RNA sequence: GGGAACGACUCGAGUAGAGUCGAAAAUAAUUAUAUGGAUUCAAAGUGUUAAUUUUUAUUCUAUAUUCUACUUUCCCCAAAAGUAAGAAUUAUACCCAACUUUGUAUGAUAGGCAUCUUGCCUAUCUUCAUCGAGAGAAUUUCGAUUCUCUCGAUGAAAAAGAAACAACAACAACAAC
Reactivity to 2A3 in 0.01 (KOAc 150mM, MgCl2 10mM, bicine 150mM(pH8.5), 24C), signal-to-noise 1, nucleotides 027 to 126: u010a010a010u160u130a010u130a300u300g030g000a000u210u040c060a120a020a020g000u030g010u220u070a140a120u020u040u080u250u040a050u080u000c020u050a090u010a020u040u000c000u010a020c000u060u000u000c000c010c010c000a050a050a000a000g000u060a170a000g010a000a000u060u010a010u020a110c000c000c000a060a010c010u000u050u040g060u020a020u080g000a000u000a000g020g000c020a000u070c250u140u170g000c000c000u000a000u050c060u000